[RMDB]
RNA sequence: GGGAACGACUCGAGUAGAGUCGAAAAAUGAAGUGGCAACAUGCGAUGCGGAGAAUUCACCGAACACCUCGGGAAUUAUGACAUCAACACUCGGAUGCCAUCAUCGUCAUUGUCCAGAAAGCUCAGACAGGGGAUGCUAGUUCGCUAGCAUCCCCUGAAAAGAAACAACAACAACAAC
Reactivity to DMS in 0.01 (KOAc 150mM, MgCl2 10mM, bicine 150mM(pH8.5), 24C), signal-to-noise 1, nucleotides 027 to 126: a130u000g000a030a090g010u010g020g070c020a060a080c120a130u000g000c000g000a050u000g000c080g000g030a100g000a000a010u000u000c040a170c130c000g000a020a140c200a230c280c150u020c000g000g000g000a030a000u050u000a030u000g000a120c100a000u000c000a040a030c060a070c100u110c060g000g000a000u020g010c010c080a000u050c000a000u030c000g080u050c060a110u000u010g020u000c000c020a230g000a000a030a100g000c010u000c060a120g010a180
Reactivity to 2A3 in 0.01 (KOAc 150mM, MgCl2 10mM, bicine 150mM(pH8.5), 24C), signal-to-noise 2, nucleotides 027 to 126: a000u160g030a050a010g120u070g150g000c020a000a000c000a010u110g000c020g000a010u000g000c070g130g070a040g100a110a030u060u000c090a210c300c000g000a060a110c130a110c080c140u040c000g000g000g000a000a000u000u000a030u150g080a030c010a000u000c030a070a100c120a070c160u100c070g070g000a050u030g000c020c000a040u020c000a000u000c000g050u060c010a010u040u050g000u000c000c000a030g130a070a050a030g010c000u030c080a050g020a170